Record summary
This 177-nucleotide RNA was probed chemically with DMS and 2A3. The 2A3 profile rests on 8,228 reads. For DMS the reverse transcriptase was MarathonRT.

[RMDB]
RNA sequence: GGGAACGACUCGAGUAGAGUCGAAAAUUCGGUGAGCCAAUACGAAGUCUUGCUGGUCUGAAGUGUUUGGACAAAUGACUCGUGGAUCACAUGGGCCUGGCGCGCGAUCGCCUUGUACAGCUCGCCGUAACCGAAUGGAAUUCGUUCCAUUCGGUUAAAAAGAAACAACAACAACAAC
Reactivity to DMS in 0.01 (KOAc 150mM, MgCl2 10mM, bicine 150mM(pH8.5), 24C), signal-to-noise 7, nucleotides 027 to 126: u010u010c020g020g020u000g010a020g010c010c060a080a210u000a090c020g010a080a090g000u000c020u000u000g020c210u010g020g010u000c010u000g010a060a140g000u000g010u010u000u000g000g010a080c170a050a060a060u000g010a020c000u000c040g030u000g000g000a090u010c080a060c060a070u000g010g000g000c010c050u010g000g010c020g020c070g000c270g000a100u000c020g000c000c000u000u000g010u000a040c180a210g000c010u000c010g010c010c010g010
Reactivity to 2A3 in 0.01 (KOAc 150mM, MgCl2 10mM, bicine 150mM(pH8.5), 24C), signal-to-noise 6, nucleotides 027 to 126: u110u040c010g010g000u000g000a000g000c020c020a050a030u120a030c020g090a130a020g010u010c020u060u120g090c160u110g050g030u000c010u040g110a190a090g120u060g190u180u090u100g090g040a050c060a030a100a050u120g070a020c010u010c030g060u120g020g040a040u070c020a020c030a120u070g010g010g020c000c030u030g000g000c000g010c030g000c020g070a150u090c000g000c000c000u010u030g020u020a040c040a010g000c000u000c010g010c010c000g000